About this RNA
This 207-nucleotide RNA was probed chemically with 2A3 and DMS. For DMS, 2,067 sequencing reads were counted. For 2A3 the reverse transcriptase was SuperScript II with manganese.
RNA sequence: GGGAACGACUCGAGUAGAGUCGAAAACGGAAGCAUUAAAACCAUUCGAGCUAGUCAAUGCGUGGAGUGUCUCUCCGCAGCGUGUUGGCGAAUGUAAAGAGUGACUAAGCAUGUAGUACCGAGGAUGAUAAGAGCAAUUCGUUCGCGAAUUGCUCAACUUUCCCAACAUCUUCGGAUGUUGGGAAAGAAAAGAAACAACAACAACAAC
Reactivity to 2A3 in 0.01 (KOAc 150mM, MgCl2 10mM, bicine 150mM(pH8.5), 24C), signal-to-noise 3, nucleotides 027 to 156: c020g030g020a080a030g000c030a020u080u120a090a050a020a020c020c000a020u030u070c050g020a010g030c020u050a030g020u030c020a020a010u030g000c000g070u300g000g030a030g000u180g210u110c040u060c000u000c150c010g040c100a030g000c020g000u030g030u020u010g010g000c010g030a050a030u120g000u090a010a130a000g020a010g020u030g030a020c040u050a000a120g020c030a030u050g000u040a050g020u030a070c030c050g010a060g030g030a040u120g020a040u130a220a100g000a000g020c010a000a000u000u000c000g010u020u030c090g000c010g100a000a000u000u000g010c000u000c000a000a010
Reactivity to DMS in 0.01 (KOAc 150mM, MgCl2 10mM, bicine 150mM(pH8.5), 24C), signal-to-noise 2, nucleotides 027 to 156: c050g010g030a170a200g060c000a130u000u020a060a050a110a100c040c030a090u000u020c010g020a300g000c060u000a180g010u000c010a070a040u020g010c000g000u010g050g030a060g050u000g050u010c130u000c020u000c020c040g030c030a190g020c050g010u010g010u020u020g000g010c000g050a150a110u000g020u020a040a130a190g000a080g030u010g000a110c020u000a130a110g000c050a020u020g030u000a090g000u010a000c030c010g000a070g030g020a030u000g000a140u010a070a100g020a020g000c000a000a040u000u010c010g050u010u010c300g060c020g000a040a010u000u000g000c000u000c000a020a060

Source information:
Conditions: 150 mM KOAc, 10 mM MgCl2 and 150 mM bicine (pH 8.5), 24 C. Reactivities are given for positions 27 through 156.